[RMDB]
RNA sequence: GGGAACGACUCGAGUAGAGUCGAAAACCGUGAACCGUGCAUGCUGGCGCUGGCAGUACAACUACGUGUUCCCGAAGCGCGCCGUGAUCGCUCCCUUCUUCCAGCUGACCGUCGCCAGCAUGACGUUGUUAAUCUUAAGCUUCGGCUUAAGAUUAACAAAAGAAACAACAACAACAAC
Reactivity to 2A3 in 0.01 (KOAc 150mM, MgCl2 10mM, bicine 150mM(pH8.5), 24C), signal-to-noise 2, nucleotides 027 to 126: c010c000g020u050g100a020a040c050c030g030u150g060c050a000u000g000c000u000g000g020c000g000c030u010g030g060c010a010g010u040a030c050a120a040c080u170a060c080g110u070g060u150u000c030c000c000g030a090a040g050c040g010c010g000c040c040g030u070g010a110u110c040g000c050u050c000c000c000u000u050c000u040u000c020c040a000g000c000u020g110a300c000c010g030u010c000g000c000c000a000g010c000a010u000g000a000c010g010u000u000
Reactivity to DMS in 0.01 (KOAc 150mM, MgCl2 10mM, bicine 150mM(pH8.5), 24C), signal-to-noise 1, nucleotides 027 to 126: c010c000g030u010g020a090a150c250c030g000u010g030c020a020u000g020c000u000g000g000c010g010c030u040g000g030c010a040g000u000a070c190a070a080c100u000a070c140g010u020g030u000u000c000c000c000g000a140a070g000c050g000c020g020c010c010g010u000g010a070u000c040g020c030u000c030c020c030u020u000c060u000u000c070c050a170g000c000u000g000a120c010c010g010u010c010g000c000c000a000g000c010a010u000g010a020c010g010u020u010
The record gives the reactivity of an RNA of 177 nucleotides to 2A3 and DMS. For DMS, 1,173 sequencing reads were counted. The reactions ran in a buffer of 150 mM KOAc, 10 mM MgCl2 and 150 mM bicine (pH 8.5), at 24 C. For 2A3, 2,271 sequencing reads were counted. Reactivities are given for positions 27 through 126.